[RMDB]
RNA sequence: GGGAACGACUCGAGUAGAGUCGAAAAGAUAUGGAUCCUGCAAUUUCGUCUGUAGGGAGCUCUCGUAUCGGAAACGAUACACGCGAGAGCGAAGAACUACACGGACGAAAUUGCAGGAUCCUAAGUCCUCCAACAAAUAGUUCGCUAUUUGUUGGAGAAAAGAAACAACAACAACAAC
Reactivity to 2A3 in 0.01 (KOAc 150mM, MgCl2 10mM, bicine 150mM(pH8.5), 24C), signal-to-noise 2, nucleotides 027 to 126: g060a020u170a070u290g010g000a020u010c010c010u040g000c000a040a020u000u030u050c000g000u000c030u080g000u000a010g020g060g010a000g020c000u000c000u000c060g060u040a010u010c000g000g040a060a110a050c020g010a010u060a130c130a090c300g280c220g020a000g000a020g000c000g050a120a030g040a010a010c010u040a020c080a160c300g010g000a000c000g010a000a000a000u000u010g000c000a010g000g010a000u000c000c020u010a010a000g010u000c010
Reactivity to DMS in 0.01 (KOAc 150mM, MgCl2 10mM, bicine 150mM(pH8.5), 24C), signal-to-noise 3, nucleotides 027 to 126: g000a110u000a300u010g010g020a020u000c000c000u010g000c000a020a010u000u000u000c020g030u010c030u000g020u010a020g010g010g000a100g010c000u010c000u000c010g030u000a010u000c000g000g000a150a150a240c030g040a000u010a040c140a130c300g080c280g010a030g010a010g000c010g000a060a180g020a090a170c010u010a040c050a120c300g000g000a000c000g010a000a000a000u000u000g010c010a000g000g000a000u000c000c000u000a010a060g010u000c060

Record summary: The record gives the reactivity of an RNA of 177 nucleotides to 2A3 and DMS. For 2A3, 3,541 sequencing reads were counted. Source: RMDB library TTRINS, as collected in RNAgym. 2A3 adducts were read by reverse transcription with SuperScript II with manganese.